[RMDB]
RNA sequence: GGGAACGACUCGAGUAGAGUCGAAAAGAUAUGGAUAGCUUAAGUGUUACUGCUCCGAUGAGUCGGAAACGACGAGGAGUCAGUAACUAAAGCUAUCCUAAGUCGACGGCUAACUUCGGUUAGCCAAUCACUUGCUUUCCUUCGGGAAAGCAAGUGAAAAAGAAACAACAACAACAAC
Reactivity to 2A3 in 0.01 (KOAc 150mM, MgCl2 10mM, bicine 150mM(pH8.5), 24C), signal-to-noise 1, nucleotides 027 to 126: g010a020u020a010u150g050g040a000u000a000g000c010u170u100a300a030g070u170g010u210u000a020c020u000g060c010u020c010c040g210a300u270g160a100g020u070c010g010g010a170a060a010c010g010a010c020g030a060g010g000a000g020u020c020a000g040u010a000a000c000u000a000a000a000g000c000u000a000u020c000c020u000a000a000g040u010c050g030a130c140g030g020c020u010a000a000c020u050u090c220g020g070u010u010a010g000c000c000a000a000
Reactivity to DMS in 0.01 (KOAc 150mM, MgCl2 10mM, bicine 150mM(pH8.5), 24C), signal-to-noise 1, nucleotides 027 to 126: g000a040u000a300u000g000g030a000u000a010g000c000u000u010a120a060g010u020g020u000u020a000c000u000g020c000u000c000c000g010a220u030g030a300g060u000c000g000g000a030a070a100c000g030a000c000g060a260g030g000a000g010u000c030a000g000u000a000a000c000u000a090a030a000g010c020u010a000u020c000c020u000a020a070g000u010c030g030a170c270g000g030c000u000a000a000c000u000u060c300g100g030u000u000a000g020c000c000a050a060